Structure probing data (2A3 and DMS) for a 207-nucleotide construct. The reactions ran in a buffer of 150 mM KOAc, 10 mM MgCl2 and 150 mM bicine (pH 8.5), at 24 C. High DMS reactivity at an A or C suggests that its Watson-Crick edge is free. For DMS the reverse transcriptase was MarathonRT. For 2A3, 8,259 sequencing reads were counted.
RNA sequence: GGGAACGACUCGAGUAGAGUCGAAAAAGUUUGUAUAAGCACUGUUUAACUUUCCCAGUGCAUGCCAAUUGGUGUUUACAGACGAGUAUGGUAUUGACCAUAUGAUACUAUUCUCUCUCUCAGGAGAGGAGAAUAGAUAACUACAAAGGAAAGACAACUCGUAGUAAUGAUUCGUCAUUACUACGAGAAAAGAAACAACAACAACAAC
Reactivity to 2A3 in 0.01 (KOAc 150mM, MgCl2 10mM, bicine 150mM(pH8.5), 24C), signal-to-noise 9, nucleotides 027 to 156: a000g030u040u020u010g060u010a080u020a150a060g000c000a000c000u000g050u040u060u080a090a030c000u010u000u000c000c000c000a000g000u000g000c010a020u070g000c010c040a280a300u180u300g020g000u050g040u060u100u030a040c020a020g010a020c010g020a030g030u000a010u010g030g010u060a170u210u280g170a050c000c000a000u010a020u050g050a020u040a080c000u000a000u000u000c000u000c000u000c000u000c000u010c120a160g080g140a030g020a020g050g030a010g000a000a000u010a000g000a010u060a040a060c090u130a050c080a040a070a000g020g000a010a020a000g010a020c030a040a020
Reactivity to DMS in 0.01 (KOAc 150mM, MgCl2 10mM, bicine 150mM(pH8.5), 24C), signal-to-noise 4, nucleotides 027 to 156: a110g010u000u000u000g030u000a080u000a090a160g020c010a030c020u010g010u000u000u010a050a140c030u000u000u000c070c030c010a100g040u000g010c040a160u000g010c050c050a160a240u000u000g030g030u010g000u000u000u000a130c030a130g010a090c050g010a200g010u010a020u010g000g040u000a190u010u020g000a090c020c000a020u000a010u000g010a180u010a100c010u000a020u010u000c000u010c000u000c010u010c000u010c140a220g020g010a050g000a030g020g010a000g010a020a000u000a020g010a080u000a040a140c100u000a190c070a060a080a090g010g000a070a050a050g020a130c050a050a180